[RMDB]
RNA sequence: GGGAACGACUCGAGUAGAGUCGAAAAGGCGUGGAUUAGGCAUGCAAGUCGAGCGAGAAUCUGUUGAAUGAUCCUUCGGGUGAAUGAUUCAGAGGACAGCGGCAAACGGGGUAGUAAUGCAUAGGUAAGGUAACGAAAAUUUCGAUUUUCGUUACCUAAAAGAAACAACAACAACAAC
Reactivity to DMS in 0.01 (KOAc 150mM, MgCl2 10mM, bicine 150mM(pH8.5), 24C), signal-to-noise 6, nucleotides 027 to 126: g010g020c060g020u000g000g000a090u020u010a040g020g010c050a080u000g020c070a090a080g010u010c040g010a120g020c040g010a070g010a270a150u000c010u000g010u010u000g000a250a030u000g000a130u010c000c010u000u030c120g010g000g010u010g000a140a030u000g000a180u010u000c030a030g010a030g000g000a160c170a050g010c030g010g020c070a020a060a080c070g010g000g020g000u000a040g000u000a070a060u010g010c060a040u010a070g000g020u010a060
Reactivity to 2A3 in 0.01 (KOAc 150mM, MgCl2 10mM, bicine 150mM(pH8.5), 24C), signal-to-noise 5, nucleotides 027 to 126: g080g000c050g040u070g000g010a120u080u090a050g030g000c020a030u070g030c030a060a040g040u040c010g030a030g030c020g020a100g020a110a050u000c010u000g020u030u030g040a040a040u030g020a030u020c020c000u040u060c170g100g000g000u000g010a020a010u020g010a030u030u000c000a010g000a010g000g010a010c020a040g010c010g030g010c010a040a040a060c040g010g000g020g010u020a020g030u020a060a080u090g030c040a040u060a080g050g040u080a090